[RMDB]
RNA sequence: GGGAACGACUCGAGUAGAGUCGAAAAGCUAGCCAGCGCACGAUGAGACUGCCGUGACGUCUACCCUGCGUCUCAACUAGUCUCCAUCAAUCAAAACGCUGGGAUUGAUGUACGAGACUAGUACACAGAGUAUGCACUUGUUCGCAGGUGUAUACUCAAAAGAAACAACAACAACAAC
Reactivity to 2A3 in 0.01 (KOAc 150mM, MgCl2 10mM, bicine 150mM(pH8.5), 24C), signal-to-noise 9, nucleotides 027 to 126: g040c030u050a010g020c000c010a010g000c010g010c010a020c030g030a030u070g010a010g020a030c020u030g010c020c010g030u030g010a020c010g030u000c010u030a080c000c000c000u010g010c010g020u000c010u000c020a020a010c000u000a000g000u000c000u000c000c000a000u000c000a000a000u000c010a010a040a050a090c090g020c080u100g040g010g000a000u000u000g000a000u000g020u070a070c080g000a000g000a000c000u000a000g010u040a010c080a000c010a010
Reactivity to DMS in 0.01 (KOAc 150mM, MgCl2 10mM, bicine 150mM(pH8.5), 24C), signal-to-noise 9, nucleotides 027 to 126: g010c050u010a090g010c030c030a040g010c030g010c050a050c040g020a080u010g010a080g000a050c030u010g010c020c060g010u010g000a070c070g010u000c030u010a120c020c010c020u000g010c040g000u000c010u010c050a110a040c010u000a010g000u000c000u000c000c010a010u000c000a010a010u000c010a070a070a090a130c130g010c090u020g000g010g000a010u000u000g000a010u000g010u030a080c130g000a010g010a010c000u000a000g000u000a060c170a100c180a110
An RNA of 177 nucleotides, treated with 2A3 and DMS and read out base by base. Conditions: 150 mM KOAc, 10 mM MgCl2 and 150 mM bicine (pH 8.5), 24 C. Reactivities are given for positions 27 through 126.